[RMDB]
Chemical mapping of a 207-nucleotide RNA with DMS and 2A3.
Conditions: 150 mM KOAc, 10 mM MgCl2 and 150 mM bicine (pH 8.5), 24 C.
For 2A3, 1,297 sequencing reads were counted.

RNA sequence: GGGAACGACUCGAGUAGAGUCGAAAAUGAGUUUUUAAGACUGGUCGAUAUCGGUGUCAAUAUGGUCAUUACCUCGCGUAGCUUGUCUUCUUCGAGGACAGCGUUUCCGAAGAUAGUGUUAGAUUCGGCACCACCGAGAAGAGGUCCCGCGUGGACAUCAUCCUCGUACAUUCGUGUACGAGGAUGAAAAAGAAACAACAACAACAAC
Reactivity to DMS in 0.01 (KOAc 150mM, MgCl2 10mM, bicine 150mM(pH8.5), 24C), signal-to-noise 1, nucleotides 027 to 156: u000g010a030g000u000u000u000u010u010a100a300g000a060c020u000g000g010u000c050g010a090u000a070u010c050g040g030u000g010u000c040a050a070u000a030u000g030g010u010c000a040u000u000a020c000c000u000c010g000c060g030u000a110g020c030u000u000g040u000c030u000u000c010u000u000c180g000a060g000g000a010c040a030g020c040g030u000u010u000c050c020g060a070a080g000a040u000a000g040u010g000u000u000a070g030a260u000u000c040g030g010c000a040c030c000a060c040c010g000a160g000a090a090g000a110g000g000u000c020c000c020g030c070g010u010g030g000a050c060a110
Reactivity to 2A3 in 0.01 (KOAc 150mM, MgCl2 10mM, bicine 150mM(pH8.5), 24C), signal-to-noise 3, nucleotides 027 to 156: u200g010a060g030u070u050u030u100u120a120a020g000a040c030u040g070g020u010c020g000a010u030a070u210c040g000g010u030g020u020c030a040a030u060a130u160g090g010u060c060a050u000u060a040c000c000u030c010g060c020g020u040a040g010c060u050u200g000u040c000u020u000c010u090u080c150g030a010g000g000a020c000a030g030c050g030u010u150u060c010c010g020a000a000g040a110u020a050g040u070g030u140u020a040g010a150u000u070c080g030g000c030a030c000c000a010c010c030g020a030g040a140a000g010a030g010g030u000c020c000c000g160c080g050u220g010g040a020c020a030
About this RNA: The data come from the RNA Mapping Database (RMDB), library OK3TST.